[RMDB]
Conditions: 150 mM KOAc, 10 mM MgCl2 and 150 mM bicine (pH 8.5), 24 C. Chemical mapping of a 177-nucleotide RNA with 2A3 and DMS.
RNA sequence: GGGAACGACUCGAGUAGAGUCGAAAAGAAGACGUGACGAAAAGUCACGAAAAAGAUCUAUGAAAAUAGAUCAAAAAUGGAGGUGCUCUCCAAAAAGCACAAAGGUUACCGAGAGGUAACCAAAAGAAUAUUUACUCACUUUCGAGUGAGUAAAUAUAAAAGAAACAACAACAACAAC
Reactivity to 2A3 in 0.01 (KOAc 150mM, MgCl2 10mM, bicine 150mM(pH8.5), 24C), signal-to-noise 4, nucleotides 027 to 126: g140a040a020g090a030c010g000u000g000a000c010g050a030a070a050a190g000u010c000a000c000g050a030a020a000a000a000g010a000u000c000u000a000u020g050a010a050a020a020u020a000g000a000u020c030a000a080a030a030a030u300g010g000a010g010g000u020g010c020u020c000u070c190c090a110a060a010a000a010g000c010a000c020a020a060a020g000g000u000u000a000c000c000g040a040g020a030g080g000u000a000a000c000c010a000a000a010a000g010a020
Reactivity to DMS in 0.01 (KOAc 150mM, MgCl2 10mM, bicine 150mM(pH8.5), 24C), signal-to-noise 4, nucleotides 027 to 126: g030a130a110g030a140c010g040u000g000a000c000g010a120a100a090a190g020u000c000a000c000g030a030a070a070a160a100g000a000u000c000u000a000u000g000a140a100a130a020u000a000g000a000u010c000a010a040a060a090a080u040g010g020a040g000g010u000g000c020u050c030u010c030c050a020a030a030a040a010g000c000a000c010a110a080a080g000g000u000u000a000c000c010g000a230g000a160g010g000u000a010a000c000c000a000a010a060a080g000a120

For DMS, 8,733 sequencing reads were counted.
In probing experiments dimethyl sulfate is read out at A N1 and C N3, which are open when not base-paired.
For 2A3, 9,203 sequencing reads were counted.
Values cover nucleotides 27 to 126.